The data come from the RNA Mapping Database (RMDB), library TTRDES. The record gives the reactivity of an RNA of 177 nucleotides to DMS and 2A3. 2A3 adducts were read by reverse transcription with SuperScript II with manganese. For 2A3, 7,126 sequencing reads were counted. The RNA was probed in 150 mM KOAc, 10 mM MgCl2 and 150 mM bicine (pH 8.5) at 24 C.
[RMDB]
RNA sequence: GGGAACGACUCGAGUAGAGUCGAAAAGAUAUGGAAUUGCGGCUCUCGAUAAGCUGCUCUCGGAAACGAGAGGCAGCUUUUGACGAGAGUACAAUUCCUAAGUCAAAGGGUAUGUUCGCAUACCCAACAGAAAAUAAGAGUUCGCUCUUAUUUUCUGAAAAGAAACAACAACAACAAC
Reactivity to DMS in 0.01 (KOAc 150mM, MgCl2 10mM, bicine 150mM(pH8.5), 24C), signal-to-noise 4, nucleotides 027 to 126: g000a060u000a300u000g000g000a030a000u010u000g010c050g030g020c000u000c000u010c010g010a140u000a020a030g010c000u000g000c000u000c000u000c000g020g000a150a090a250c010g010a020g010a060g010g020c000a000g000c000u000u000u000u010g000a210c100g010a010g020a020g030u000a050c000a020a010u000u000c000c000u000a040a100g010u000c030a110a130a160g000g000g010u000a000u000g000u000u010c260g000c000a020u000a000c000c000c010a080a080
Reactivity to 2A3 in 0.01 (KOAc 150mM, MgCl2 10mM, bicine 150mM(pH8.5), 24C), signal-to-noise 3, nucleotides 027 to 126: g020a000u060a020u160g000g030a010a030u010u060g070c260g300g000c100u000c000u010c030g060a080u020a170a010g000c010u000g000c000u000c000u000c010g030g010a160a060a050c020g000a010g010a030g110g000c000a000g000c000u000u010u010u040g140a050c030g000a010g010a000g010u000a000c000a010a000u000u020c000c010u000a110a020g070u030c070a150a080a080g010g010g000u020a000u010g060u040u110c300g010c160a000u000a010c000c000c000a000a000